[RMDB]
RNA sequence: GGGAACGACUCGAGUAGAGUCGAAAAGAUAUGGAAUCCCAGUAGGGAGCUGGUGGUCGGAAACGACCAUGCAGCUUUGAUCUACGGGAUUCCUAAGUCAAAAUCGUCAGAGUUCGCUCUGACGAAACAGAGACUAUAAGUUCGCUUAUAGUCUCUGAAAAGAAACAACAACAACAAC
Reactivity to DMS in 0.01 (KOAc 150mM, MgCl2 10mM, bicine 150mM(pH8.5), 24C), signal-to-noise 5, nucleotides 027 to 126: g000a030u000a300u010g000g000a020a000u000c010c000c000a150g050u000a010g010g000g010a070g030c000u000g010g020u000g000g010u000c000g000g010a060a060a150c000g000a010c000c000a010u000g010c000a010g010c000u000u000u020g000a130u010c000u000a010c010g000g000g010a000u000u000c000c000u000a010a060g000u000c030a150a090a160a150u000c010g000u000c000a000g000a020g020u000u010c290g020c000u000c000u000g010a010c000g010a000a040a150
Reactivity to 2A3 in 0.01 (KOAc 150mM, MgCl2 10mM, bicine 150mM(pH8.5), 24C), signal-to-noise 2, nucleotides 027 to 126: g000a010u030a020u100g010g020a000a000u000c000c010c080a010g020u010a000g020g160g180a140g010c010u020g000g050u010g000g010u010c010g010g000a030a030a030c000g000a000c020c020a000u100g160c020a010g000c000u010u050u150g020a010u000c010u000a000c020g020g000g000a000u000u000c000c000u000a040a000g010u010c010a000a000a020a300u050c010g020u000c000a000g010a000g040u080u160c210g090c090u000c000u010g000a000c010g000a010a000a000
This 177-nucleotide RNA was probed chemically with DMS and 2A3. For DMS the reverse transcriptase was MarathonRT. Source: RMDB library TTRDES, as collected in RNAgym.